[RMDB]
RNA sequence: GGGAACGACUCGAGUAGAGUCGAAAAACAGCGAAAGGCACAAGACUUCGAACAUUAUAGCAGUUAGUAUUUGCCUAAACCCAUUGCAAUAUAUGGGACAGUAGAGGUCGCAAGCCUAUACUGUGCGAAAAGUCGCAAGGUUUCGACCUUGCGACAAAGUAGGGUGUUUGUUCGCAAACACCCUACUAAAAGAAACAACAACAACAAC
Reactivity to DMS in 0.01 (KOAc 150mM, MgCl2 10mM, bicine 150mM(pH8.5), 24C), signal-to-noise 1, nucleotides 027 to 156: a060c000a060g000c040g000a170a130a140g010g030c020a060c080a090a100g000a030c060u000u000c010g040a140a090c070a280u000u000a150u010a110g000c020a110g040u000u000a070g000u000a110u000u000u000g000c010c010u010a050a050a260c000c020c000a010u000u000g010c040a160a120u000a080u000a010u010g020g000g000a120c010a010g010u010a050g000a030g000g090u000c040g040c180a070a180g000c000c000u000a120u010a000c010u000g040u000g040c080g000a100a030a050a130g020u000c000g010c030a020a020g030g000u000u000u000c300g050a030c010c030u000u000g020c020g010a030c000a000a000
Reactivity to 2A3 in 0.01 (KOAc 150mM, MgCl2 10mM, bicine 150mM(pH8.5), 24C), signal-to-noise 2, nucleotides 027 to 156: a000c010a000g010c030g030a230a050a000g010g020c030a030c040a030a080g020a060c030u040u040c040g110a150a090c090a150u180u190a160u260a070g040c070a020g040u040u050a040g070u060a140u040u030u110g010c000c000u080a160a060a090c050c000c000a000u010u040g000c000a000a020u020a000u000a000u180g010g000g000a000c010a000g010u010a000g030a020g040g030u100c060g020c120a000a020g000c010c000u000a010u010a000c000u000g000u000g000c030g030a020a050a020a040g000u010c000g000c000a000a000g010g010u020u070u040c030g000a040c000c000u000u000g000c000g010a000c000a000a000